[RMDB]
RNA sequence: GGGAACGACUCGAGUAGAGUCGAAAACCAUCCGCGUGAGCGGAUGGAACCACUGCGUGAGCAGUGGAGAUCAGGUCUUCGGACCUGAUCAGUACAACUACGGUUGUACAGUCCUCGUUCGCGAGGACAAGCGUUAACUACGGUUAACGCAGUAAUAACUACGGUUAUUACAAAGACAGUCGCCGCUUCGUCGUCGUCCUCUUCGGGGGAGACGGGCGGAGGGGAGGAAAGUCCGGGCUGACUGUCCACGACAGAACCCGGCUUAUACAGGAGUGUUCGCACUCCUGAAAAGAAACAACAACAACAAC
Reactivity to 2A3 in 0.01 (KOAc 150mM, MgCl2 10mM, bicine 150mM(pH8.5), 24C), signal-to-noise 7, nucleotides 027 to 266: c000c000a000u000c000c010g020c030g080u140g120a050g010c000g000g000a000u000g000g010a000a010c010c000a000c000u000g000c010g050u110g070a070g010c000a000g000u010g000g010a100g000a000u000c000a000g000g020u000c000u040u160c230g120g000a000c000c000u000g000a000u000c000a000g000u000a000c000a010a000c010u030a030c250g120g000u000u000g000u000a010c010a050g010u000c000c010u000c010g030u050u050c250g020c010g100a000g000g000a000c010a010a010g000c000g000u000u000a000a000c000u020a030c240g100g000u010u000a000a000c000g000c020a000g000u000a000a000u000a000a000c010u040a020c290g110g000u000u000a010u000u000a010c020a010a100a000g090a020c070a050g080u090c030g020c080c010g110c060u010u010c000g030u000c000g010u010c020g250u040c010c010u020c020u040u110c210g030g000g000g000g000a020g010a010c040g040g030g010c010g000g010a010g020g040g010g020a050g020g100a170a050a000g040u050c010c010g000g000g020c050u070g070a090c000u000g010u000c030c050a140c150g090a030c010a020g040a030a020c010c000c000g000g020c020u080u120a110u050a060
Reactivity to DMS in 0.01 (KOAc 150mM, MgCl2 10mM, bicine 150mM(pH8.5), 24C), signal-to-noise 4, nucleotides 027 to 266: c000c000a020u000c000c000g020c000g000u040g010a270g020c000g010g000a000u000g000g000a100a110c000c000a000c000u000g010c010g000u010g000a210g000c000a000g010u000g000g010a100g000a010u000c000a010g000g000u000c000u000u020c190g010g020a010c000c000u000g000a000u000c010a100g010u000a000c010a010a010c010u010a100c210g030g010u000u000g010u000a000c020a140g000u000c000c000u000c000g010u000u030c210g010c000g020a010g000g010a010c010a020a070g010c000g000u000u000a010a000c000u000a130c170g040g010u000u000a010a000c000g020c000a070g000u010a010a010u000a010a010c000u000a110c170g030g010u000u000a000u000u000a010c010a120a140a130g010a100c180a080g010u010c040g010c000c000g000c000u000u000c010g010u000c000g000u010c010g020u010c000c000u000c010u000u020c180g010g010g000g000g010a230g000a020c000g010g030g010c020g000g010a000g000g000g000g000a040g010g010a100a050a040g000u020c000c000g000g010g010c090u010g010a070c000u000g000u000c000c090a130c160g000a080c050a040g010a250a220c000c000c000g000g010c040u000u000a060u000a180